Notes:
An RNA of 177 nucleotides, treated with DMS and 2A3 and read out base by base. For DMS, 40,359 sequencing reads were counted. The reactions ran in a buffer of 150 mM KOAc, 10 mM MgCl2 and 150 mM bicine (pH 8.5), at 24 C. Source: RMDB library OK1LIB, as collected in RNAgym. For DMS the reverse transcriptase was MarathonRT.
RNA sequence: GGGAACGACUCGAGUAGAGUCGAAAAGUUGGCCGUCACCCUGGGAGUCGGGCCGUGCCGGAACCCGGUGACGAUACGGGUGGCCUCGGUGGCGUCCGUCGGCGCGAUAUCGUCGCCGACCAACGCGGCCACCCCUAUUAUUCGUAAUAGGGGUGGCAAAAGAAACAACAACAACAAC
Reactivity to DMS in 0.01 (KOAc 150mM, MgCl2 10mM, bicine 150mM(pH8.5), 24C), signal-to-noise 9, nucleotides 027 to 126: g000u000u000g000g010c250c010g000u000c010a020c020c030c170u020g020g000g010a100g010u010c000g000g000g010c060c070g020u010g010c020c000g000g010a080a060c020c020c010g020g010u000g000a050c030g000a060u030a020c050g010g000g010u000g010g010c040c020u010c170g000g010u020g000g000c020g020u010c030c300g000u000c010g000g010c000g020c020g010a300u050a100u060c070g000u040c010g010c010c000g000a050c010c060a060a020c030g000c140g000
Reactivity to 2A3 in 0.01 (KOAc 150mM, MgCl2 10mM, bicine 150mM(pH8.5), 24C), signal-to-noise 9, nucleotides 027 to 126: g040u040u030g020g000c020c010g010u020c000a020c020c030c090u080g020g010g020a090g070u070c020g010g030g000c110c050g040u110g060c020c030g070g030a110a100c000c000c000g000g010u030g010a030c030g000a020u040a050c010g000g000g020u040g100g020c000c020u050c060g090g040u120g030g000c000g010u000c010c010g000u000c000g000g000c000g000c010g060a090u090a110u300c070g160u150c030g000c000c000g000a000c000c010a020a010c020g010c030g070